[RMDB]
RNA sequence: GGGAACGACUCGAGUAGAGUCGAAAAGCGUACUACAGCUCUGAAAACAGCUGAUGACCAUGGGACUUUCUAUCCCAAAUAGGAUAGAAAUCCCAUGCAAGGCUGCGUGGAGCUGUAUCGCAAAACGUCCCAUCGCUAGUUCGCUAGCGAUGGGACGCAAAAAGGUAAGUUUCGACUUACCUUUUUGAAAAGAAACAACAACAACAAC
Reactivity to DMS in 0.01 (KOAc 150mM, MgCl2 10mM, bicine 150mM(pH8.5), 24C), signal-to-noise 2, nucleotides 027 to 156: g000c000g030u010a060c080u000a020c020a020g020c010u000c000u000g010a130a190a140a050c020a010g000c010u000g000a080u010g000a120c300c020a000u000g010g000g000a030c090u000u000u000c000u000a030u000c000c000c030a030a130a240u010a050g010g020a060u010a000g000a030a030a030u000c000c000c000a000u000g000c000a060a120g010g030c010u000g010c030g020u000g000g010a040g000c000u000g010u010a000u000c010g000c020a050a030a080a100c010g010u000c000c000c010a010u000c000g050c020u010a030g000u000u000c300g040c000u000a020g030c020g020a000u000g000g000g000a000c000g000
Reactivity to 2A3 in 0.01 (KOAc 150mM, MgCl2 10mM, bicine 150mM(pH8.5), 24C), signal-to-noise 2, nucleotides 027 to 156: g000c000g020u100a070c060u010a000c010a010g010c010u000c000u050g130a170a100a070a050c030a020g010c010u010g010a300u090g020a050c080c000a000u000g000g000g000a010c040u010u000u000c000u000a010u020c010c020c030a070a190a160u190a050g000g000a000u000a000g000a000a000a010u000c000c010c000a000u000g000c010a050a100g010g000c000u010g000c030g070u260g000g000a000g000c000u010g000u000a000u050c000g000c000a070a050a010a050c000g000u020c000c000c020a000u000c000g010c000u030a010g040u080u030c250g000c180u000a000g000c000g000a000u000g000g000g020a000c000g000